RNA sequence: GGGAACGACUCGAGUAGAGUCGAAAAGCCUGCUACCCCGUGUCGCACCCUCACGGUGCGUGGCGUUUCCUCUCGCCCCAAUUAUGCGCAGGCGCGCAUCACCGAAGUGUUACCGCCCACGCAUUCCUCACUGACAUGCAUUCGUGCAUGUCAGUGAAAAAGAAACAACAACAACAAC
Reactivity to DMS in 0.01 (KOAc 150mM, MgCl2 10mM, bicine 150mM(pH8.5), 24C), signal-to-noise 3, nucleotides 027 to 126: g020c000c010u010g040c030u020a090c030c010c020c040g000u040g000u000c030g030c020a020c020c010c060u050c110a110c130g030g000u000g000c040g020u030g010g010c010g030u000u000u000c010c010u010c030u040c040g010c000c000c010c060a080a140u040u020a010u010g010c040g010c080a110g030g010c120g040c050g030c010a020u000c140a040c090c100g030a120a150g000u010g000u000u010a120c080c020g020c020c000c020a170c020g020c010a080u000u000c100c110
Reactivity to 2A3 in 0.01 (KOAc 150mM, MgCl2 10mM, bicine 150mM(pH8.5), 24C), signal-to-noise 4, nucleotides 027 to 126: g010c000c010u000g010c000u060a070c000c000c010c010g020u040g040u040c030g010c010a060c010c010c000u130c020a070c070g040g010u030g010c020g000u010g030g020c020g000u000u060u020c010c010u030c000u020c020g060c020c010c000c010a040a080u180u080a050u120g000c010g010c020a040g150g000c060g000c010g000c050a030u030c020a020c050c050g100a110a040g010u030g040u160u050a040c010c020g020c010c000c000a030c020g010c010a040u050u030c000c010